[RMDB]
RNA sequence: GGGAACGACUCGAGUAGAGUCGAAAAUCCUAAGUCUAGCGCGCGUGGCAAUGAUGGUCGGUUGUCAGCCUAUCGGAAACGAUAGGCUUGGAUUUACCGACUUGAGCCACGUUCGCUAGAUAUGGAAAACUCAAGUCCGGGUUCGCCCGGACUUGAGGGCCAAAUACAAGUUCGCUUGUAUUUGGCCAAAAGAAACAACAACAACAAC
Reactivity to 2A3 in 0.01 (KOAc 150mM, MgCl2 10mM, bicine 150mM(pH8.5), 24C), signal-to-noise 1, nucleotides 027 to 156: u030c010c010u010a110a010g010u010c000u000a010g000c000g000c000g000c010g020u000g000g030c020a100a300u120g020a030u110g030g000u000c000g000g000u010u030g010u000c000a000g000c000c000u000a010u010c000g020g070a100a080a080c030g000a000u010a010g000g000c020u000u040g010g000a000u060u070u200a030c010c000g000a010c010u000u000g010a000g000c000c010a000c000g000u000u000c000g000c000u000a000g000a000u000a010u010g000g030a000a110a030a000c000u020c010a020a000g010u000c000c000g010g060g000u070u090c210g070c060c050c040g000g000a000c020u010u010g000a010g010